[RMDB]
RNA sequence: GGGAACGACUCGAGUAGAGUCGAAAAUGUGAUUUCUCAUAAGGUGCUGAUGGAGCUAUCGAGAAGAACGUCCACCAACCCCUAGUCGGUAUCGUUUACGGCUAGGACUACACACGGUGCCUAAUCGUCAGCCAUGUACUUUCGAGUACAUGGCUGAAAAAGAAACAACAACAACAAC
Reactivity to DMS in 0.01 (KOAc 150mM, MgCl2 10mM, bicine 150mM(pH8.5), 24C), signal-to-noise 3, nucleotides 027 to 126: u050g010u000g000a080u000u010u000c000u000c050a100u080a090a120g040g050u000g000c000u000g010a050u010g000g050a020g030c030u050a020u020c040g000a020g040a110a070g020a060a110c150g000u020c030c110a130c040c060a030a080c220c050c000c000u000a040g000u000c030g000g010u000a000u050c210g000u030u030u020a030c020g000g000c030u000a020g000g000a050c080u000a030c130a070c260a150c140g000g050u000g000c050c010u000a040a120u040c110g000
Reactivity to 2A3 in 0.01 (KOAc 150mM, MgCl2 10mM, bicine 150mM(pH8.5), 24C), signal-to-noise 4, nucleotides 027 to 126: u200g060u060g040a180u040u040u060c030u010c040a030u070a140a060g010g020u030g020c030u050g040a140u080g100g050a050g030c060u080a080u160c140g050a070g030a180a050g020a060a070c050g060u050c040c030a030c040c000a000a050c000c000c000c000u010a010g020u050c020g090g000u050a080u190c110g060u060u120u130a030c020g000g010c000u010a000g000g000a000c020u090a020c010a000c000a000c010g000g030u030g000c000c000u080a110a110u110c040g020

This 177-nucleotide RNA was probed chemically with DMS and 2A3. It was measured as part of the RMDB library OK1LIB. The DMS profile rests on 2,843 reads. For DMS the reverse transcriptase was MarathonRT. The reactions ran in a buffer of 150 mM KOAc, 10 mM MgCl2 and 150 mM bicine (pH 8.5), at 24 C.